[RMDB]
Structure probing data (DMS and 2A3) for a 177-nucleotide construct.
Conditions: 150 mM KOAc, 10 mM MgCl2 and 150 mM bicine (pH 8.5), 24 C.
High 2A3 reactivity points to a flexible backbone, as in loops and unpaired stretches.
The 2A3 profile rests on 974 reads.
Values cover nucleotides 27 to 126.

RNA sequence: GGGAACGACUCGAGUAGAGUCGAAAAGAGCGCGCCGCGCUCGGCGCAGAAGGCGAUCAGGUCAUCUUCGAUCGCGGCCGGGCAGGCGAAGGUUUGACCUGUUACCAGAAGGGCGUGCAGUGGGGUGCGUACGACGAUUGUUCGCAAUCGUCGUACGAAAAGAAACAACAACAACAAC
Reactivity to DMS in 0.01 (KOAc 150mM, MgCl2 10mM, bicine 150mM(pH8.5), 24C), signal-to-noise 2, nucleotides 027 to 126: g000a060g010c040g010c050g020c020c000g020c080g030c030u000c010g000g030c020g050c130a140g010a120a140g020g010c010g010a020u010c050a040g010g000u000c100a100u010c010u000u000c120g010a020u000c090g020c030g010g020c010c030g000g000g000c040a180g000g020c010g020a000a040g000g000u000u000u030g010a040c010c010u000g010u000u000a140c030c040a100g010a110a110g000g000g020c020g020u000g030c060a050g030u030g010g000g010g060u000g000
Reactivity to 2A3 in 0.01 (KOAc 150mM, MgCl2 10mM, bicine 150mM(pH8.5), 24C), signal-to-noise 1, nucleotides 027 to 126: g000a010g020c020g000c010g000c040c000g070c040g000c050u020c030g000g040c100g000c030a040g100a210a020g170g020c040g000a000u010c040a020g060g110u100c050a110u070c160u050u150c090g100a140u070c030g000c000g070g000c020c000g000g020g000c020a030g000g060c010g000a020a000g060g000u050u050u160g010a000c000c000u020g050u100u070a090c040c000a040g040a140a110g100g010g000c040g010u090g010c010a020g020u080g010g060g000g040u080g010